[RMDB]
This 207-nucleotide RNA was probed chemically with DMS. The data come from the RNA Mapping Database (RMDB), library RNAMAK. For DMS the reverse transcriptase was MarathonRT. The DMS profile rests on 2,144 reads.

RNA sequence: GGGAACGACUCGAGUAGAGUCGAAAACGCUGGGCGAAAGAGAACUUUAGCGUCGCACAACGAAUCUCUGAAGCGCGCACGGAGACUAUUGUGAACUACGACGCAGGAAGUUCUCUUUCGCCUGUGCUGAAGCGCGCACGGCAACCGAAAGGUGCGAGAAUUGAAAUUACUUCGGUAAUUUCAAUUCAAAAGAAACAACAACAACAAC
Reactivity to DMS in 0.01 (KOAc 150mM, MgCl2 10mM, bicine 150mM(pH8.5), 24C), signal-to-noise 1, nucleotides 027 to 156: c130g050c020u000g010g010g000c000g010a060a020a020g010a030g020a000a020c000u010u000u010a300g030c000g020u000c020g070c000a050c000a100a030c040g010a040a060u000c000u000c000u000g010a040a070g030c010g060c010g050c010a300c020g020g000a020g030a020c040u000a040u010u000g000u010g000a070a140c040u030a230c020g010a000c000g040c010a060g040g010a020a030g030u020u000c000u000c010u010u000u000c010g070c000c000u010g000u000g000c010u010g000a080a070g040c030g070c010g000c090a300c090g000g020c040a070a150c020c000g000a100a150a150g010g030u000g010c060g000a150